[RMDB]
Record summary:
Structure probing data (DMS and 2A3) for a 177-nucleotide construct. Conditions: 150 mM KOAc, 10 mM MgCl2 and 150 mM bicine (pH 8.5), 24 C. Reactivities are given for positions 27 through 126. High DMS reactivity at an A or C suggests that its Watson-Crick edge is free. For DMS, 3,082 sequencing reads were counted. For DMS the reverse transcriptase was MarathonRT.

RNA sequence: GGGAACGACUCGAGUAGAGUCGAAAAUGAAAGCGCGAACUCAGCCGAAAGGCACCGCGAAGAAAAACAGGAUGACGCGCAUCCCACAUCCAGCGGACUCACGCAGAGACGCGGAAGAGAAUAAAAAGUAUUCAAUUAGUUUCGACUAAUUGAAUACAAAAGAAACAACAACAACAAC
Reactivity to DMS in 0.01 (KOAc 150mM, MgCl2 10mM, bicine 150mM(pH8.5), 24C), signal-to-noise 4, nucleotides 027 to 126: u000g000a080a100a150g010c010g050c000g000a140a200c190u000c060a130g020c000c000g000a070a130a180g000g020c010a160c100c040g010c040g010a090a120g010a050a070a070a090a110c130a110g000g010a030u000g000a300c040g010c020g010c020a050u000c000c000c000a110c120a040u000c010c010a110g060c000g000g000a150c030u000c020a080c160g010c140a180g000a060g020a160c030g020c000g000g000a050a090g000a090g000a070a090u020a030a070a110a070a070
Reactivity to 2A3 in 0.01 (KOAc 150mM, MgCl2 10mM, bicine 150mM(pH8.5), 24C), signal-to-noise 5, nucleotides 027 to 126: u120g020a070a060a010g030c000g000c010g030a070a060c010u030c090a030g000c000c000g050a050a030a030g020g010c030a030c030c040g050c060g040a120a170g050a040a160a030a000a020c040a020g100g000a050u050g050a020c020g000c000g000c030a030u020c000c000c010a020c010a040u000c010c010a020g000c010g070g110a190c020u020c040a030c070g150c070a030g010a010g010a100c010g020c000g010g010a020a050g040a020g060a070a020u190a110a080a020a010a010